[RMDB]
RNA sequence: GGGAACGACUCGAGUAGAGUCGAAAACAGAAUCACUUCGGUGAUUCUGAAAGAAAGAAGAAAACCCGCGACGACGAGCGCGAAAUAAAUAAAUCGUCGUAAAAAUCGAGUCCUUCGGGACUCGAAACAUAAAUGUGUAGUUCGCUACACAUUUAUGAAAAGAAACAACAACAACAAC
Reactivity to 2A3 in 0.01 (KOAc 150mM, MgCl2 10mM, bicine 150mM(pH8.5), 24C), signal-to-noise 5, nucleotides 027 to 126: c010a000g000a000a000u000c000a000c010u050u090c210g140g000u000g000a000u000u000c000u000g000a000a000a010g070a010a030a010g120a060a020g090a010a090a020a030c030c010c010g000c000g010a030c010g000a000c000g000a010g020c020g010c010g090a090a100a100u200a020a070a020u090a030a080a010u020c010g000u000c010g000u020a070a110a010a000a030u030c000g000a010g000u000c020c000u080u110c200g080g000g000a000c000u000c000g000a000a000a000
Reactivity to DMS in 0.01 (KOAc 150mM, MgCl2 10mM, bicine 150mM(pH8.5), 24C), signal-to-noise 5, nucleotides 027 to 126: c010a010g010a020a000u000c000a000c000u000u020c160g030g010u010g000a000u000u000c000u000g000a030a080a110g000a090a090a100g000a120a120g000a130a060a130a150c020c020c010g020c020g000a070c010g000a010c010g000a020g000c040g010c020g010a040a060a040u010a030a070a070u010a060a090a080u000c000g000u000c000g020u020a010a050a120a110a100u000c000g000a010g000u010c000c000u000u010c140g020g000g010a000c000u000c000g000a000a030a090